[RMDB]
RNA sequence: GGGAACGACUCGAGUAGAGUCGAAAAGACUAAUUUUAAGCCUGUAUUUGACUUAGUGAGCCGUAGUGUGAUUAGAACUCACACUAGUUACCACUCGGCAAGUCAGGAAUACUUAGACAUUAGAGAAGAUAUUGUGUUAUUUCGAUAGUACGAUAUCAAAAGAAACAACAACAACAAC
Reactivity to DMS in 0.01 (KOAc 150mM, MgCl2 10mM, bicine 150mM(pH8.5), 24C), signal-to-noise 9, nucleotides 027 to 126: g020a180c010u000a010a010u000u000u010u000a010a020g010c020c010u000g010u060a020u000u000u000g010a140c010u000u000a020g000u000g010a060g020c300c300g010u000a000g010u000g000u000g000a010u000u020a140g000a130a200c300u000c010a010c000a000c000u000a030g010u020u030a210c100c010a010c000u000c100g000g010c000a010a000g000u000c000a000g000g010a250a060u030a300c030u000u000a010g000a020c210a010u000u000a010g010a140g010a100a090
Reactivity to 2A3 in 0.01 (KOAc 150mM, MgCl2 10mM, bicine 150mM(pH8.5), 24C), signal-to-noise 9, nucleotides 027 to 126: g080a010c010u010a010a020u010u010u020u040a010a010g040c000c000u040g130u140a110u010u010u020g160a280c000u000u010a000g010u010g050a030g060c070c050g140u020a000g000u000g000u000g000a010u020u060a070g060a120a030c020u000c010a000c000a000c000u000a000g010u010u110a050c020c000a000c000u000c000g000g000c000a000a000g000u000c000a000g030g000a050a060u160a140c010u010u010a010g010a020c040a070u010u030a020g020a010g030a210a020